[RMDB]
RNA sequence: GGGAACGACUCGAGUAGAGUCGAAAAGGUGAGAAAGGAGCUGCCAGCACUAAGCCGGACGGCGCCCUCGCACCGAGUUCCGCUGCGGGUUCGCCUGCAAGAACGCAUGGUGUUGAGGCCCUGUCCGCCAUUGACAUUACUUCGGUAAUGUCAAUGGAAAAGAAACAACAACAACAAC
Reactivity to 2A3 in 0.01 (KOAc 150mM, MgCl2 10mM, bicine 150mM(pH8.5), 24C), signal-to-noise 3, nucleotides 027 to 126: g040g010u070g020a070g070a050a130a050g070g020a040g010c020u050g060c090c040a020g010c010a030c110u110a060a030g060c030c000g000g010a000c010g000g020c040g010c060c020c000u000c010g000c010a000c000c000g000a020g020u000u010c000c020g000c030u030g010c010g040g000g000u030u060c210g060c060c000u000g000c020a020a080g000a000a000c010g040c190a120u300g000g000u040g010u130u300g040a020g000g010c000c000c000u020g000u000c000c000g010
Reactivity to DMS in 0.01 (KOAc 150mM, MgCl2 10mM, bicine 150mM(pH8.5), 24C), signal-to-noise 4, nucleotides 027 to 126: g010g010u000g010a090g010a060a100a090g010g010a100g020c050u000g020c040c020a060g000c030a100c150u010a100a080g020c190c010g000g010a010c000g020g020c180g000c190c020c000u000c010g020c000a010c010c000g000a170g000u000u000c000c040g000c070u000g000c010g020g010g000u000u010c260g010c000c000u000g010c010a050a080g000a050a020c020g010c150a170u020g000g010u000g010u010u020g020a030g000g000c070c150c010u000g000u000c010c010g010

Conditions: 150 mM KOAc, 10 mM MgCl2 and 150 mM bicine (pH 8.5), 24 C. Chemical mapping of a 177-nucleotide RNA with 2A3 and DMS. It was measured as part of the RMDB library VIROID. The 2A3 profile rests on 6,513 reads. For 2A3 the reverse transcriptase was SuperScript II with manganese.